Source: RMDB library TTRINS, as collected in RNAgym.
Structure probing data (DMS and 2A3) for a 177-nucleotide construct.
2A3 adducts were read by reverse transcription with SuperScript II with manganese.

[RMDB]
RNA sequence: GGGAACGACUCGAGUAGAGUCGAAAAGAUAUGGAGCGCUAAUAAGCGAUAAGAUAGAUUGAAUAGACGGGUCGGAAACGACCUACUAUUCAAUCUAUCUUUUGACGCUUAUAACGCUCCUAAGUCACCUAGUGUUAAGGUUCGCCUUAACACUAGGAAAAGAAACAACAACAACAAC
Reactivity to DMS in 0.01 (KOAc 150mM, MgCl2 10mM, bicine 150mM(pH8.5), 24C), signal-to-noise 4, nucleotides 027 to 126: g010a050u010a300u020g010g010a010g020c000g010c010u000a170a050u000a010a000g010c000g020a130u000a000a010g000a010u000a000g000a030u000u000g000a000a010u000a000g000a160c250g010g000g000u000c000g020g000a130a090a260c000g000a010c000c000u000a030c000u000a010u000u000c000a000a000u000c000u000a000u000c000u000u010u000u020g000a250c070g010c000u000u000a010u000a040a100c000g000c000u000c000c000u000a020a070g000u000c040a200
Reactivity to 2A3 in 0.01 (KOAc 150mM, MgCl2 10mM, bicine 150mM(pH8.5), 24C), signal-to-noise 2, nucleotides 027 to 126: g020a010u090a070u180g000g000a020g020c010g000c030u080a290a030u010a250a000g000c020g020a030u030a070a010g000a010u010a000g000a000u000u000g000a020a010u060a020g300a300c300g000g000g000u000c020g020g010a170a100a090c030g040a010c030c000u010a000c020u000a000u010u000c000a000a000u010c000u010a000u000c000u000u000u000u010g000a000c020g000c000u000u030a000u000a030a000c000g000c000u000c000c010u000a000a000g000u030c000a030

Reactivities are given for positions 27 through 126. The DMS profile rests on 5,117 reads. The RNA was probed in 150 mM KOAc, 10 mM MgCl2 and 150 mM bicine (pH 8.5) at 24 C.